[RMDB]
RNA sequence: GGGAACGACUCGAGUAGAGUCGAAAAUGUCGACCAUCGUCUCGGUGUUGAUGGCGGUCAUCGAUGGCCUCAUGAUCCAGUGGAUCGCCGAUCCGUCCGCCACCCCGCGAUCGACCGAGGUAAUCCGGCACAGCGCGUAGUUCGCUACGCGCUGUGCAAAAGAAACAACAACAACAAC
Reactivity to 2A3 in 0.01 (KOAc 150mM, MgCl2 10mM, bicine 150mM(pH8.5), 24C), signal-to-noise 1, nucleotides 027 to 126: u190g020u040c000g020a050c010c010a020u000c000g080u000c000u000c000g080g040u070g040u100u010g040a170u050g000g060c100g000g000u000c080a080u130c080g120a110u010g000g020c000c000u250c110a130u270g020a040u050c030c040a190g060u230g190g040a000u010c020g010c100c000g000a020u000c000c020g020u000c000c000g000c000c000a000c060c000c000c030g000c050g000a030u070c120g060a020c000c000g000a010g010g050u130a150a000u000c030c060g100

An RNA of 177 nucleotides, treated with 2A3 and read out base by base. The 2A3 profile rests on 462 reads. The RNA was probed in 150 mM KOAc, 10 mM MgCl2 and 150 mM bicine (pH 8.5) at 24 C. Reactivities are rounded to 0.1 and cut off at 0 and 3.